[RMDB]
RNA sequence: GGGAACGACUCGAGUAGAGUCGAAAAGCGACGCAGUGCGUGUUCAAAGUCGGCAACGGAGGCGCAUUGCAGAUUCAAGGGCUAAACUGCAAGUAAACCGCCCGGAAAAAUGCCGUCUGAAGGCUUCAUCCCAUCGUCGAUUCGUCGACGAUGGGAUAAAAGAAACAACAACAACAAC
Reactivity to DMS in 0.01 (KOAc 150mM, MgCl2 10mM, bicine 150mM(pH8.5), 24C), signal-to-noise 1, nucleotides 027 to 126: g000c040g000a000c010g040c010a110g020u040g000c040g000u000g000u010u040c010a220a150a050g040u000c010g000g000c000a030a170c120g000g040a150g000g000c000g000c070a050u040u000g010c020a070g010a060u000u040c050a140a160g000g000g040c020u000a020a060a030c090u000g000c090a020a120g000u010a150a110a150c170c020g030c010c000c020g000g000a000a010a150a130a100u010g020c000c000g110u000c040u000g000a160a210g010g010c060u010u000c050
Reactivity to 2A3 in 0.01 (KOAc 150mM, MgCl2 10mM, bicine 150mM(pH8.5), 24C), signal-to-noise 2, nucleotides 027 to 126: g020c000g020a010c050g060c040a000g040u060g210c010g010u010g150u000u020c000a000a030a080g000u000c010g000g050c000a030a040c040g070g000a140g010g000c020g000c120a020u000u000g000c010a010g000a050u140u130c120a150a110g060g010g020c060u110a100a090a000c020u060g070c100a040a000g020u090a130a110a100c040c020g020c050c000c040g030g000a150a050a000a000a000u050g000c000c000g010u000c040u030g120a170a110g080g010c000u010u000c010
Overview
The data come from the RNA Mapping Database (RMDB), library OK1LIB. Chemical mapping of a 177-nucleotide RNA with DMS and 2A3. Conditions: 150 mM KOAc, 10 mM MgCl2 and 150 mM bicine (pH 8.5), 24 C. For DMS the reverse transcriptase was MarathonRT.